[RMDB]
RNA sequence: GGGAACGACUCGAGUAGAGUCGAAAAUAACAAAAACGGUCAAGACGACCUGGCACAGGCUGUAGAGCCAGGAAACCCAUAAACGUAGAUAGAUAUACAGCCUAAGGCGAGAAGAACUCGCCACAAACCGAGUGUACGACUUCGGUCGUGCACUCGGAAAAGAAACAACAACAACAAC
Reactivity to DMS in 0.01 (KOAc 150mM, MgCl2 10mM, bicine 150mM(pH8.5), 24C), signal-to-noise 2, nucleotides 027 to 126: u010a120a030c100a100a040a020a180a030c130g020g010u050c090a150a060g030a120c010g000a050c060c000u000g000g000c000a090c040a120g000g000c000u020g010u000a010g030a100g000c040c000a000g000g030a050a050a240c000c000c040a070u100a050a070a100c080g000u020a140g000a060u010a020g040a060u020a170u020a000c000a010g050c000c000u000a070a120g000g010c000g010a000g000a150a110g010a090a110c000u000c000g060c000c000a020c170a010a060a070
Reactivity to 2A3 in 0.01 (KOAc 150mM, MgCl2 10mM, bicine 150mM(pH8.5), 24C), signal-to-noise 3, nucleotides 027 to 126: u070a020a030c080a020a090a040a000a020c050g080g060u160c120a030a070g090a120c040g020a060c010c000u000g000g010c000a040c030a060g000g000c000u010g000u000a000g000a000g060c000c030a000g010g010a030a040a020c050c010c000a050u220a090a190a010c040g000u000a030g030a220u060a090g030a010u080a070u000a090c000a000g020c000c010u020a040a080g000g000c000g030a000g010a190a010g070a100a020c000u000c000g000c000c000a000c000a000a020a000

This 177-nucleotide RNA was probed chemically with DMS and 2A3. Conditions: 150 mM KOAc, 10 mM MgCl2 and 150 mM bicine (pH 8.5), 24 C. DMS adducts were read by reverse transcription with MarathonRT.